[RMDB]
RNA sequence: GGGAACGACUCGAGUAGAGUCGAAAAGCGCCAGACCUUGGGUGUCUCCCAAGACGAGCAGGUGGAGUUCGACGAGGAGGAGGAGGAUGAUGCCGAGGAGACCGCCACCGGCAGCCAGGAGAGCGGCCACUACCCUGGAUUUCGAUCCAGGGUAGUGAAAAGAAACAACAACAACAAC
Reactivity to DMS in 0.01 (KOAc 150mM, MgCl2 10mM, bicine 150mM(pH8.5), 24C), signal-to-noise 3, nucleotides 027 to 126: g000c070g020c010c010a060g010a160c080c010u000u010g000g000g020u010g000u010c060u000c000c010c070a110a050g020a150c090g010a090g000c020a110g000g040u010g000g000a090g000u010u000c050g010a190c070g010a160g030g040a100g000g000a120g010g010a110g000g000a100u000g000a140u050g000c000c020g010a170g000g010a150g010a030c070c000g000c020c020a100c050c040g040g010c010a170g030c060c010a060g000g000a100g020a100g000c010g000g040c080
Reactivity to 2A3 in 0.01 (KOAc 150mM, MgCl2 10mM, bicine 150mM(pH8.5), 24C), signal-to-noise 6, nucleotides 027 to 126: g030c040g030c010c000a040g040a140c010c020u060u050g020g000g010u080g150u020c080u060c090c000c000a010a000g060a060c090g010a010g040c050a030g010g060u040g050g030a090g020u110u120c060g040a030c040g020a080g040g020a050g020g020a030g040g010a040g060g000a060u090g020a040u090g060c010c010g030a060g040g010a040g020a030c010c040g020c020c020a040c020c000g000g030c020a010g060c030c010a020g030g030a050g000a000g050c030g010g010c010